[RMDB]
RNA sequence: GGGAACGACUCGAGUAGAGUCGAAAACUUUCCUGCCCUCGAGGAGCUCACAGUCUAGUAUGUCUCAGCCCUACUAGACUGAGGCUCCUUGAGGGCAGGGAUCAAAAGGGGAUGCUUCGGCAUCCCCGCAAGAUUAAGUCUUCGGACUUAAUCUUGCAAAAGAAACAACAACAACAAC
Reactivity to DMS in 0.01 (KOAc 150mM, MgCl2 10mM, bicine 150mM(pH8.5), 24C), signal-to-noise 3, nucleotides 027 to 126: c050u000u000u000c000c010u000g010c000c000c000u010c000g000a000g010g010a020g010c010u010c050a170c020a040g010u000c000u000a010g010u010a010u000g010u000c080u000c260a120g020c180c080c070u000a000c010u010a000g000a030c000u000g000a200g010g000c010u000c000c010u000u000g010a010g000g000g000c000a000g010g000g000a000u010c110a040a050a100a140g000g010g000g010a010u000g010c000u000u010c170g050g010c000a000u000c000c000c000c010
Reactivity to 2A3 in 0.01 (KOAc 150mM, MgCl2 10mM, bicine 150mM(pH8.5), 24C), signal-to-noise 3, nucleotides 027 to 126: c010u010u020u040c000c000u000g000c000c000c000u000c000g010a010g000g010a000g000c020u100c090a260c000a020g010u000c000u010a010g010u000a020u100g070u030c050u050c280a080g030c020c000c000u010a010c010u000a000g010a000c000u000g000a000g000g000c000u000c000c010u000u000g000a000g000g000g000c000a000g000g000g000a010u110c030a000a100a050a060g000g000g000g000a000u010g000c010u050u080c170g150g000c000a000u000c000c000c000c000

The record gives the reactivity of an RNA of 177 nucleotides to DMS and 2A3. Values are in units of 0.01, from 0 to 300, in steps of 10. DMS (dimethyl sulfate) methylates the pairing face of unpaired adenines and cytosines. It was measured as part of the RMDB library RFMREP.